[RMDB]
RNA sequence: GGGAACGACUCGAGUAGAGUCGAAAAAGUGAGCCGAUAGUACGCUAUCGGCUCACAUCAUGGUGGUGGCUGGGGGCAGCCUCAUGGUGGUGGCUGGAGUGGCGUGAGUCUACGGACUCACGCCACACACAAAAUGUUUAUUCGUAAACAUUUUGUGAAAAGAAACAACAACAACAAC
Reactivity to 2A3 in 0.01 (KOAc 150mM, MgCl2 10mM, bicine 150mM(pH8.5), 24C), signal-to-noise 1, nucleotides 027 to 126: a000g010u010g010a000g000c010c000g000a000u000a000g030u040a030c210g010c140u000a000u000c000g000g000c000u000c000a000c000a000u020c010a000u020g020g030u050g030g050u100g030g000c120u030g010g020g000g060g000c010a040g030c020c000u040c030a040u070g030g000u030g050g010u030g010g030c030u000g080g050a150g000u010g000g000c000g010u050g000a030g000u000c040u000a070c300g070g000a000c000u020c000a000c000g000c000c000a020c010a010